[RMDB]
RNA sequence: GGGAACGACUCGAGUAGAGUCGAAAAGGGGUCCUACUUUGUCAGCUGGAAACAAAGCGACGAAGUAUACUGAAGCCUCCACGGUAUACAGAGCUUUGGUGUACAGCUUGGAUUUAAGUAGGACGGAGGCACCCAAAACCGUUGUUCGCAACGGUAACAACCUAGAACAGUUCGCUGUUCUAGGUUGAAAAGAAACAACAACAACAAC
Reactivity to 2A3 in 0.01 (KOAc 150mM, MgCl2 10mM, bicine 150mM(pH8.5), 24C), signal-to-noise 3, nucleotides 027 to 156: g000g010g030g010u010c010c010u000a000c000u090u080u060g080u060c050a050g000c010u010g000g020a030a050a050c000a000a010a010g000c020g220a280c030g020a170a010g010u000a000u010a000c010u000g060a160a050g010c000c000u000c010c010a000c000g000g000u000a000u000a000c000a010g010a000g000c000u020u020u020g030g000u080g060u040a010c010a010g030c010u040u250g070g000a010u010u130u180a010a000g000u000a000g000g000a000c040g000g000a000g000g010c000a050c010c010c000a070a040a010a010c010c010g010u000u010g030u040u070c170g000c140a000a000c010g020g000u010a000a020
Reactivity to DMS in 0.01 (KOAc 150mM, MgCl2 10mM, bicine 150mM(pH8.5), 24C), signal-to-noise 2, nucleotides 027 to 156: g000g020g000g020u000c000c000u000a000c010u000u000u010g030u000c050a070g040c000u020g000g000a300a130a120c010a020a040a000g000c000g000a200c150g000a120a190g020u000a000u000a020c000u010g010a020a110g000c030c040u000c010c030a300c040g000g020u010a040u000a010c020a170g000a190g000c020u010u010u000g010g000u000g000u000a150c000a040g000c050u000u010g000g000a090u000u020u000a000a050g070u000a050g000g010a030c000g000g000a040g110g030c010a130c000c000c000a030a030a080a070c020c010g010u000u000g020u000u000c270g020c050a020a010c000g010g020u000a050a270